[RMDB]
RNA sequence: GGGAACGACUCGAGUAGAGUCGAAAACGUGGUGGAUGCGAUUAUCGAUGCGUUCUAUGACGGUAUGUACGCGUUUGAAGAUUACGCUAUCACUAACAAUCCAACAUGGAAAGUCGAACAUAUGAGCCAAGAGGCAGUUUUAGCAUGGCUAAAAAACAUCGUAGGUAUUUUUCGAAAUACCUACGAUAAAAGAAACAACAACAACAAC
Reactivity to DMS in 0.01 (KOAc 150mM, MgCl2 10mM, bicine 150mM(pH8.5), 24C), signal-to-noise 4, nucleotides 027 to 156: c090g030u010g000g010u000g020g000a080u000g020c040g020a090u000u000a100u000c040g010a040u000g040c040g030u010u010c040u010a180u000g020a110c100g010g040u010a100u000g020u000a050c050g020c020g050u000u000u000g030a080a300g000a130u000u000a040c040g010c010u010a110u000c020a030c050u000a040a100c050a080a170u010c030c000a040a080c070a080u000g020g010a060a050a110g000u000c080g000a090a080c060a100u000a060u000g010a120g000c000c030a040a160g010a210g010g020c030a080g000u000u000u000u000a080g030c020a130u000g020g010c020u010a000a030a040a110a040a050c110
Reactivity to 2A3 in 0.01 (KOAc 150mM, MgCl2 10mM, bicine 150mM(pH8.5), 24C), signal-to-noise 8, nucleotides 027 to 156: c060g020u020g010g010u010g030g070a050u100g030c020g090a210u040u060a070u110c020g010a010u060g010c020g010u000u010c020u050a060u080g100a050c080g050g010u100a040u130g020u020a010c020g000c010g020u020u080u200g100a120a060g010a060u080u070a010c020g000c010u040a040u170c010a000c030u050a100a020c010a020a010u010c010c010a010a050c050a150u120g050g030a120a050a030g070u080c040g040a060a010c040a040u140a080u230g050a020g010c000c020a060a030g040a080g120g000c040a030g040u030u050u050u120a040g010c050a050u050g030g000c000u040a070a050a000a010a010a010c060